[RMDB]
Chemical mapping of a 177-nucleotide RNA with DMS and 2A3. For DMS the reverse transcriptase was MarathonRT. 2A3 adducts were read by reverse transcription with SuperScript II with manganese.
RNA sequence: GGGAACGACUCGAGUAGAGUCGAAAAGCAACGAGCGUAAUCGCGUCUUGACUAGGGAGACUGUAGGUGACGUGAGUAUCUAUCCCAGAGUGCAUAGCGCACAAUACGCUGAUCUACAGUCAAUUAAAACUUAAAAUGAUUUCGAUCAUUUUAAGUUAAAAGAAACAACAACAACAAC
Reactivity to DMS in 0.01 (KOAc 150mM, MgCl2 10mM, bicine 150mM(pH8.5), 24C), signal-to-noise 9, nucleotides 027 to 126: g010c070a060a050c060g010a070g010c020g010u010a080a110u000c040g010c020g010u000c010u000u000g010a150c100u010a110g000g010g010a180g010a030c010u000g010u000a010g000g010u000g010a030c020g020u000g010a080g010u010a130u000c070u000a090u000c020c020c010a190g000a090g010u000g010c010a130u010a100g010c210g010c020a030c030a090a080u000a130c020g000c010u000g000a040u000c010u000a010c010a020g000u000c010a080a090u010u010a050a050
Reactivity to 2A3 in 0.01 (KOAc 150mM, MgCl2 10mM, bicine 150mM(pH8.5), 24C), signal-to-noise 9, nucleotides 027 to 126: g050c030a020a050c070g130a010g020c010g030u070a050a080u070c020g000c000g040u010c020u080u150g070a110c050u100a090g070g110g040a140g010a020c010u010g010u010a000g000g030u020g010a010c010g010u010g010a020g030u070a060u050c040u040a080u030c010c010c010a020g030a020g020u030g000c020a050u160a230g090c050g000c060a000c000a010a010u060a020c010g000c010u020g020a020u000c000u010a010c000a010g010u010c010a010a010u130u070a050a100